[RMDB]
RNA sequence: GGGAACGACUCGAGUAGAGUCGAAAAGAUAUGGAAUGUGCAGAAUGGUGACGUUGAAAUCGGAAACGAUGGAGUCAUUCAUUCUUCCCACAUUCCUAAGUCAAACUAGAGACUUCGGUCUCUAGAAGUUUAUCACAUUCUUCGGAAUGUGAUAAACAAAAGAAACAACAACAACAAC
Reactivity to 2A3 in 0.01 (KOAc 150mM, MgCl2 10mM, bicine 150mM(pH8.5), 24C), signal-to-noise 3, nucleotides 027 to 126: g000a010u050a040u090g000g010a000a010u010g010u020g110c300a020g010a010a010u000g000g020u000g020a000c010g150u300u060g010a040a040a010u010c010g020g020a080a040a030c020g010a010u010g000g000a010g010u000c000a000u140u170c010a000u000u000c000u030u010c000c010c000a000c010a000u000u000c000c000u000a070a000g010u020c050a060a040a100c010u000a000g000a000g010a010c010u050u040c300g110g000u000c000u000c000u000a000g000a010a000
Reactivity to DMS in 0.01 (KOAc 150mM, MgCl2 10mM, bicine 150mM(pH8.5), 24C), signal-to-noise 4, nucleotides 027 to 126: g000a020u010a300u000g000g000a020a000u000g000u000g090c160a010g000a030a010u000g010g020u000g010a020c000g000u010u030g010a060a120a020u000c000g000g000a160a080a180c000g010a020u000g000g010a100g010u000c000a010u000u010c010a000u000u000c000u000u000c170c190c000a020c010a010u000u000c000c000u020a010a080g000u010c020a090a110a290c000u000a000g010a020g000a020c000u000u000c190g020g020u000c000u000c000u000a000g000a070a110
This 177-nucleotide RNA was probed chemically with 2A3 and DMS. 2A3 adducts were read by reverse transcription with SuperScript II with manganese. It was measured as part of the RMDB library TTRDEL. DMS (dimethyl sulfate) methylates the pairing face of unpaired adenines and cytosines.